An RNA of 177 nucleotides, treated with DMS and 2A3 and read out base by base. For DMS the reverse transcriptase was MarathonRT. It was measured as part of the RMDB library M2PK50. The 2A3 profile rests on 3,631 reads.
RNA sequence: GGGAACGACUCGAGUAGAGUCGAAAAGCCUUGUUGUUCGCAACAAGGCAAAUGGGACGGGUCGGGAGGGGGAUACUCGCGGUCGCAAGAAGAAUCCAGACUAAAGGCCAAGGUUCGCCUUGGCCAACAUUAUACCGAUGUUCGCAUCGGUAUAAUGAAAAGAAACAACAACAACAAC
Reactivity to DMS in 0.01 (KOAc 150mM, MgCl2 10mM, bicine 150mM(pH8.5), 24C), signal-to-noise 2, nucleotides 027 to 126: g000c010c000u000u000g030u010u000g000u010u010c250g050c010a030a000c010a040a000g000g000c010a000a010a090u000g000g040g020a210c170g020g010g000u020c110g010g010g030a110g000g000g010g000g000a070u000a020c030u010c030g010c130g010g010u000c040g020c100a040a100g000a040a060g020a100a070u010c010c030a110g000a100c140u020a020a030a060g000g020c000c000a000a000g000g010u000u000c240g000c000c000u000u000g000g000c000c000a000a010
Reactivity to 2A3 in 0.01 (KOAc 150mM, MgCl2 10mM, bicine 150mM(pH8.5), 24C), signal-to-noise 2, nucleotides 027 to 126: g010c000c000u000u000g000u000u010g020u020u050c200g010c090a010a000c000a020a000g000g000c010a020a000a010u030g000g000g180a050c090g070g050g100u250c100g050g050g050a290g040g030g010g000g010a000u030a040c020u010c020g000c050g020g020u030c030g010c040a040a070g060a050a000g050a070a090u040c040c010a020g040a100c060u150a150a050a070g010g000c000c000a000a010g030g000u020u060c130g040c020c000u000u010g000g000c000c000a000a000